The data come from the RNA Mapping Database (RMDB), library RFM100. The record gives the reactivity of an RNA of 177 nucleotides to DMS and 2A3. The RNA was probed in 150 mM KOAc, 10 mM MgCl2 and 150 mM bicine (pH 8.5) at 24 C. DMS adducts were read by reverse transcription with MarathonRT.

[RMDB]
RNA sequence: GGGAACGACUCGAGUAGAGUCGAAAAAACGGCUUGCCUGCCCCGGAUGAACUGUUGAUAAAAAAGAGGGCCAGCAUCCGUUUCCAGACGGCCCUGAGUGGAUUGUGACGUAACAUGGCACCUUGCUACAUUUAUCGCGAUUCGUCGCGAUAAAUGUAAAAGAAACAACAACAACAAC
Reactivity to DMS in 0.01 (KOAc 150mM, MgCl2 10mM, bicine 150mM(pH8.5), 24C), signal-to-noise 2, nucleotides 027 to 126: a020a040c040g000g000c130u000u000g010c110c010u000g000c090c000c000c000g030g010a090u010g010a110a220c120u010g010u000u040g040a010u120a040a060a060a210a070a150g000a170g000g010g020c020c150a010g000c080a020u000c000c020g010u000u000u000c010c000a220g000a100c150g020g000c000c020c000u020g060a030g080u000g000g000a080u000u060g000u010g000a070c030g000u020a080a090c030a050u060g000g080c100a080c060c050u000u000g070c060u000
Reactivity to 2A3 in 0.01 (KOAc 150mM, MgCl2 10mM, bicine 150mM(pH8.5), 24C), signal-to-noise 1, nucleotides 027 to 126: a010a010c020g060g030c050u000u100g000c010c020u040g000c000c000c010c000g080g030a160u040g070a060a090c020u040g080u230u050g100a220u230a130a100a020a030a060a040g090a270g050g000g020c000c010a000g030c000a000u000c010c000g000u020u010u000c050c000a010g040a020c030g040g010c000c000c000u040g010a040g030u070g020g000a060u000u050g080u050g040a010c080g000u000a000a130c010a010u020g020g010c010a020c020c020u000u100g000c020u000